[RMDB]
RNA sequence: GGGAACGACUCGAGUAGAGUCGAAAAGAGAGGCCCACAGCGUACUUGGUGACACUGUAUGCCUUCACCGCUCAGCCCCCGGUCUGGCAUGACAGACAGGACAGCACCAGGGAGUCAAGGGCACUGGGAUGUUAACGGAUUUCGAUCCGUUAACAUCAAAAGAAACAACAACAACAAC
Reactivity to 2A3 in 0.01 (KOAc 150mM, MgCl2 10mM, bicine 150mM(pH8.5), 24C), signal-to-noise 3, nucleotides 027 to 126: g150a000g020a070g080g000c020c020c000a010c040a000g010c020g120u220a040c020u050u040g050g020u070g060a040c020a010c110u000g000u020a020u020g000c010c000u040u070c060a030c020c020g020c030u140c060a170g060c000c010c000c000c000g000g000u000c010u000g000g000c010a020u030g080a050c010a010g040a010c010a020g040g070a030c040a040g000c010a010c010c010a000g020g010g000a030g000u040c020a040a090g000g010g000c010a010c040u040g020g110
Reactivity to DMS in 0.01 (KOAc 150mM, MgCl2 10mM, bicine 150mM(pH8.5), 24C), signal-to-noise 6, nucleotides 027 to 126: g010a170g010a100g010g010c010c010c050a070c230a200g040c030g020u010a210c020u000u000g010g020u020g000a080c070a120c020u000g000u000a070u000g000c010c010u000u000c180a050c000c030g000c050u000c120a100g010c020c020c030c300c010g010g000u000c080u000g000g000c040a060u000g000a040c080a050g000a120c050a090g030g020a090c170a090g000c020a040c020c030a040g000g000g000a300g010u000c070a110a200g000g000g020c030a080c060u000g000g000